[RMDB]
RNA sequence: GGGAACGACUCGAGUAGAGUCGAAAAGAAGAAUCUCCUUUCAUCGUGGUGUUGGUACGUUGAGAAGUCGUCUUGCAUGAGGCGGCGCCGUGCUUGCCGGGCUUUGCAUCCCUAGCCGGUCGAAGGGUGAAUCUAUGCUUUUCGAAGCAUAGAUUCAAAAAGAAACAACAACAACAAC
Reactivity to 2A3 in 0.01 (KOAc 150mM, MgCl2 10mM, bicine 150mM(pH8.5), 24C), signal-to-noise 5, nucleotides 027 to 126: g140a040a000g050a030a080u030c060u050c040c010u000u050u040c040a110u050c040g040u050g050g040u060g020u060u130g010g020u020a040c050g040u050u090g070a110g040a180a010g030u030c010g010u010c010u050u070g120c100a130u300g060a010g050g000c010g010g000c010g000c000c000g030u030g010c010u020u020g030c020c020g000g010g020c000u070u060u040g000c030a060u040c000c000c000u000a020g040c020c020g050g040u090c060g010a020a040g030g000g020
Reactivity to DMS in 0.01 (KOAc 150mM, MgCl2 10mM, bicine 150mM(pH8.5), 24C), signal-to-noise 6, nucleotides 027 to 126: g000a110a090g010a100a110u020c070u010c010c010u000u000u010c030a050u010c090g030u000g000g010u000g010u000u020g000g010u000a020c060g010u010u020g000a070g000a090a090g020u010c020g010u000c020u000u000g010c220a070u030g010a040g020g010c040g020g010c010g020c050c030g010u000g010c030u010u010g000c030c030g010g010g000c040u000u010u000g000c120a110u000c010c010c010u000a130g010c020c020g010g000u000c080g000a050a060g010g010g010